[RMDB]
RNA sequence: GGGAACGACUCGAGUAGAGUCGAAAAGAUAUGGAUGACUUGUCAGCUCGCGCGGCUUACUGCUCGUCGGAAACGACGAGAACUACAGUAAGCCGCGGAAGAGCUUGGAUUUAGUCAUCCUAAGUCACAUAUAAUGACACUUCGGUGUCAUUAUAUGAAAAGAAACAACAACAACAAC
Reactivity to DMS in 0.01 (KOAc 150mM, MgCl2 10mM, bicine 150mM(pH8.5), 24C), signal-to-noise 4, nucleotides 027 to 126: g020a040u000a300u000g000g010a020u000g010a030c000u000u010g000u000c010a050g000c000u000c000g000c010g010c000g010g010c000u000u000a010c000u000g000c020u000c000g000u000c000g020g010a120a110a290c010g000a010c000g000a020g000a030a020c070u020a300c010a020g010u000a010a000g020c000c000g010c000g000g000a040a100g000a010g000c000u000u010g020g010a020u000u000u000a010g010u000c000a000u000c000c000u010a020a090g010u010c030a300
Reactivity to 2A3 in 0.01 (KOAc 150mM, MgCl2 10mM, bicine 150mM(pH8.5), 24C), signal-to-noise 2, nucleotides 027 to 126: g040a020u090a030u250g000g000a000u000g000a000c000u010u030g000u040c020a010g000c000u000c010g290c000g000c010g060g030c010u000u010a010c000u010g000c000u010c000g010u000c010g000g040a090a080a060c010g020a010c050g000a010g000a030a010c110u300a050c010a010g000u010a020a000g020c000c000g000c010g000g000a000a000g000a000g000c000u010u120g010g010a000u270u300u260a010g000u000c000a000u000c000c000u000a050a040g000u020c000a000